[RMDB]
RNA sequence: GGGAACGACUCGAGUAGAGUCGAAAAGCCCCACGCUUCGGCGUGGGGCAAAUAAAAUCAGCGGUAAGCUGGCGUAAAAUUUUACCGCUGAACGCCAGCUUAAAACACCCUUGUUCGCAAGGGUGAACUAUCAUCAUGUGUUCGCACAUGAUGAUAGAAAAGAAACAACAACAACAAC
Reactivity to 2A3 in 0.01 (KOAc 150mM, MgCl2 10mM, bicine 150mM(pH8.5), 24C), signal-to-noise 2, nucleotides 027 to 126: g010c030c010c010c020a010c000g060c020u110u130c300g180g000c000g020u000g020g020g040g000c000a010a030a000u010a010a030a000a080u090c020a010g020c020g090g070u060a030a000g000c020u010g020g030c000g000u050a070a160a130a160u120u210u100u130a020c020c030g010c050u050g040a010a000c010g000c000c000a000g010c000u030u050a020a060a040a030c030a020c000c000c000u000u000g030u030u050c250g000c080a000a000g000g000g000u000g000a010a010
Reactivity to DMS in 0.01 (KOAc 150mM, MgCl2 10mM, bicine 150mM(pH8.5), 24C), signal-to-noise 2, nucleotides 027 to 126: g000c000c000c000c010a020c050g040c000u000u000c160g040g040c000g080u000g050g000g000g030c010a000a000a010u000a050a040a080a090u010c050a100g000c090g010g010u000a010a020g010c000u000g000g000c020g000u010a020a050a120a080u000u010u000u000a110c050c060g000c080u010g010a060a010c020g010c000c000a010g010c050u000u010a010a090a130a150c000a010c000c000c000u000u000g000u000u010c230g000c000a030a020g000g000g030u000g000a000a070
The record gives the reactivity of an RNA of 177 nucleotides to 2A3 and DMS. 2A3 adducts were read by reverse transcription with SuperScript II with manganese. The DMS profile rests on 1,862 reads. Values cover nucleotides 27 to 126.